[RMDB]
RNA sequence: GGGAACGACUCGAGUAGAGUCGAAAAGAUAUGGAAUCCCAGGGAGCUGGUGGUCGGAAACGACCACCCAGCUUUGAUCUGGUGAUUCCUAAGUCAAAAGUCGAUCCUAGUUCGCUAGGAUCGACAAGAUUAAAGAGGACUUCGGUCCUCUUUAAUCAAAAGAAACAACAACAACAAC
Reactivity to 2A3 in 0.01 (KOAc 150mM, MgCl2 10mM, bicine 150mM(pH8.5), 24C), signal-to-noise 1, nucleotides 027 to 126: g000a000u020a000u050g000g000a000a010u000c020c000c000a000g000g000g000a020g010c030u020g040g010u020g030g020u000c000g020g000a060a000a010c020g000a020c010c050a010c030c010c010a000g020c000u140u140u030g020a010u000c010u010g000g070u220g020a000u000u010c000c000u000a010a000g010u020c000a090a090a030a100g010u010c000g010a000u040c000c000u010a020g000u030u130c270g030c210u000a000g020g000a010u000c010g010a000c000a000a010
Reactivity to DMS in 0.01 (KOAc 150mM, MgCl2 10mM, bicine 150mM(pH8.5), 24C), signal-to-noise 3, nucleotides 027 to 126: g000a020u000a030u010g000g000a030a000u000c000c000c010a030g000g000g010a000g050c010u000g010g030u000g000g000u000c000g010g000a000a000a010c000g010a020c000c000a020c300c120c030a000g010c000u000u000u020g000a040u010c000u000g000g010u000g000a010u000u000c000c000u000a010a040g000u000c000a150a070a140a170g000u000c000g000a010u000c010c000u000a000g000u010u000c220g010c010u000a010g000g000a010u010c000g000a000c000a000a030